[RMDB]
RNA sequence: GGGAACGACUCGAGUAGAGUCGAAAAGCCCAUAUGUUCGCAUAUGGGCAAAAGCAGAUCUGAGCAUGCGAGCUCUCUGCGACAAAAGUCAUCGCAAUAAAAAAACACGUCACUUCGGUGACGUGAAGAUGGACAUCGUCUUCGGACGAUGUCCAUCAAAAGAAACAACAACAACAAC
Reactivity to 2A3 in 0.01 (KOAc 150mM, MgCl2 10mM, bicine 150mM(pH8.5), 24C), signal-to-noise 1, nucleotides 027 to 126: g000c010c010c020a000u030a000u000g020u000u080c260g000c180a000u010a000u020g000g000g000c000a060a040a010a030g000c000a010g020a040u110c110u230g000a000g000c000a030u060g000c000g030a000g000c010u000c000u000c000u020g000c010g020a060c070a000a210a040a020g120u140c040a060u010c120g020c060a010a030u300a210a180a040a000a000a000a000c000a010c010g030u020c000a000c000u000u050c230g040g030u010g000a000c010g000u000g010a000a000